Structure probing data (2A3 and DMS) for a 177-nucleotide construct. The reactions ran in a buffer of 150 mM KOAc, 10 mM MgCl2 and 150 mM bicine (pH 8.5), at 24 C. For 2A3 the reverse transcriptase was SuperScript II with manganese. Source: RMDB library OK2TST, as collected in RNAgym. Reactivities are given for positions 27 through 126.
[RMDB]
RNA sequence: GGGAACGACUCGAGUAGAGUCGAAAAAAUGGAAACGCGCAAGCCUGACAAUAUCGCCGGAAAAGCGCCCGGCAGCACGAUUUUGCGCACGAUGGACCACCAGCUCAGGCCGAAACUCUGCCCCAUAUAAAUAUUAGCUAUUCGUAGCUAAUAUUUAAAAAGAAACAACAACAACAAC
Reactivity to 2A3 in 0.01 (KOAc 150mM, MgCl2 10mM, bicine 150mM(pH8.5), 24C), signal-to-noise 2, nucleotides 027 to 126: a000a000u200g020g040a110a160a020c070g020c000g000c020a020a010g030c000c020u050g050a040c030a040a080u060a050u210c070g030c020c000g000g070a020a170a030a070g100c050g020c020c000c000g030g030c000a010g010c020a010c040g000a010u000u030u130u260g010c040g000c010a010c050g030a030u080g010g020a030c020c030a030c010c000a060g030c020u010c030a010g040g030c010c010g050a040a020a030c030u050c020u050g040c000c000c000c000a010u110a010
Reactivity to DMS in 0.01 (KOAc 150mM, MgCl2 10mM, bicine 150mM(pH8.5), 24C), signal-to-noise 5, nucleotides 027 to 126: a070a060u010g020g000a070a090a090c130g010c030g020c030a060a090g010c020c010u000g010a100c100a080a090u010a120u000c130g010c020c010g010g000a070a050a090a170g000c100g010c110c020c020g010g030c020a090g000c080a030c100g000a100u000u010u010u000g000c020g030c040a070c080g010a080u000g010g000a090c040c030a060c040c030a050g000c060u000c030a070g010g010c030c020g000a060a080a060c050u000c030u000g010c060c010c010c050a060u010a100